[RMDB]
RNA sequence: GGGAACGACUCGAGUAGAGUCGAAAAGGGUACCGAAGUCGAGAUGGAUGGGGAUGUUGACCGGAAUGUUGAGGCUAAAGUUCAGUAGCGGGAUCUGGGGAACAGUGAUUGCGUAGUGUGCGCCCCACCCUUACGUUCACUUCGGUGAACGUAAGGGAAAAGAAACAACAACAACAAC
Reactivity to 2A3 in 0.01 (KOAc 150mM, MgCl2 10mM, bicine 150mM(pH8.5), 24C), signal-to-noise 2, nucleotides 027 to 126: g080g080g010u130a080c000c060g050a000a070g150u070c110g030a000g040a170u180g050g030a030u000g000g000g000g070a040u090g000u100u060g150a170c020c070g000g030a080a060u030g000u040u040g020a010g110g000c060u160a230a000a070g000u010u040c050a030g040u040a050g030c000g010g020g020a030u030c080u200g000g000g000g000a010a010c040a020g100u000g040a210u070u070g020c020g020u050a070g040u000g090u110g090c040g010c000c000c020c000a070
Reactivity to DMS in 0.01 (KOAc 150mM, MgCl2 10mM, bicine 150mM(pH8.5), 24C), signal-to-noise 2, nucleotides 027 to 126: g000g000g020u000a020c090c050g000a070a040g000u000c050g030a120g020a080u020g030g000a100u020g010g000g000g000a070u040g000u040u000g050a100c060c030g000g000a080a070u030g000u020u000g000a130g010g030c040u000a060a030a180g000u000u010c080a020g000u000a080g000c000g000g000g030a030u000c010u000g000g000g000g050a060a070c010a050g020u030g000a070u030u000g000c060g010u000a080g000u000g070u050g000c090g050c000c010c000c120a070
An RNA of 177 nucleotides, treated with 2A3 and DMS and read out base by base. The DMS profile rests on 2,399 reads. The reactions ran in a buffer of 150 mM KOAc, 10 mM MgCl2 and 150 mM bicine (pH 8.5), at 24 C. For 2A3 the reverse transcriptase was SuperScript II with manganese.